[RMDB]
RNA sequence: GGGAACGACUCGAGUAGAGUCGAAAACGGCAAUCUUCACCAAUACUGAGGAUUACUGGUGUGCGGCGUAUCCCCCAAGCGCCCCGCCAGGCAAGGUACCGUGGACCGCGUACCUUGAUUUACUCCUCUCUCAUGGCCCAUUCGUGGGCCAUGAGAGAAAAGAAACAACAACAACAAC
Reactivity to 2A3 in 0.01 (KOAc 150mM, MgCl2 10mM, bicine 150mM(pH8.5), 24C), signal-to-noise 2, nucleotides 027 to 126: c050g060g000c010a030a030u000c040u110u120c060a020c030c040a060a050u210a220c050u040g010a000g050g010a030u000u070a070c020u000g000g000u010g060u110g000c100g000g000c000g000u080a140u220c000c000c020c000c040a020a080g000c010g010c000c000c000c000g000c000c000a000g010g060c000a000a000g010g000u000a000c000c030g000u110g140g120a090c050c020g000c100g010u050a020c000c000u000u010g000a000u000u000u030a060c040u030c000c010u030

About this RNA
The record gives the reactivity of an RNA of 177 nucleotides to 2A3. Reactivities are given for positions 27 through 126. Conditions: 150 mM KOAc, 10 mM MgCl2 and 150 mM bicine (pH 8.5), 24 C. Source: RMDB library RFM100, as collected in RNAgym.